Conditions: 150 mM KOAc, 10 mM MgCl2 and 150 mM bicine (pH 8.5), 24 C. Chemical mapping of a 177-nucleotide RNA with 2A3 and DMS. For 2A3 the reverse transcriptase was SuperScript II with manganese. The 2A3 profile rests on 1,831 reads. Source: RMDB library OK2TRN, as collected in RNAgym.
[RMDB]
RNA sequence: GGGAACGACUCGAGUAGAGUCGAAAAGAUGAGUUGGGCCUGAUGCAGGAUAAAUAUGGCCUGGAGCAGAUAAAAACCCAUUGGUUGAACCCAGAUGAGGAUUGGGAGGAGGCUAUUAAGAAGUAUGCAGUAUGUGGUUUUUCGAAACCACAUACUGAAAAGAAACAACAACAACAAC
Reactivity to 2A3 in 0.01 (KOAc 150mM, MgCl2 10mM, bicine 150mM(pH8.5), 24C), signal-to-noise 2, nucleotides 027 to 126: g050a020u090g000a040g050u030u020g030g030g010c010c030u050g020a050u100g030c080a040g020g070a050u080a180a170a050u180a130u140g040g000c010c010u020g000g000a030g000c010a020g030a100u130a120a180a030a020a010c000c010c050a040u030u050g020g000u010u080g030a050a060c010c050c000a030g030a110u090g040a060g070g000a080u080u090g030g000g000a040g000g010a010g010g000c020u050a040u200u090a110a060g060a070a000g040u070a070u180g060
Reactivity to DMS in 0.01 (KOAc 150mM, MgCl2 10mM, bicine 150mM(pH8.5), 24C), signal-to-noise 4, nucleotides 027 to 126: g010a090u000g000a060g020u000u000g020g000g000c080c010u010g010a140u010g010c050a030g010g020a070u000a050a110a110u010a100u000g000g010c040c030u010g000g000a080g020c030a040g000a130u000a040a080a080a080a100c010c020c060a060u000u000g000g030u010u020g000a110a150c090c020c040a080g020a120u000g000a080g010g010a080u010u000g000g000g000a100g000g010a070g000g010c080u000a060u000u010a090a110g000a070a110g010u000a080u000g010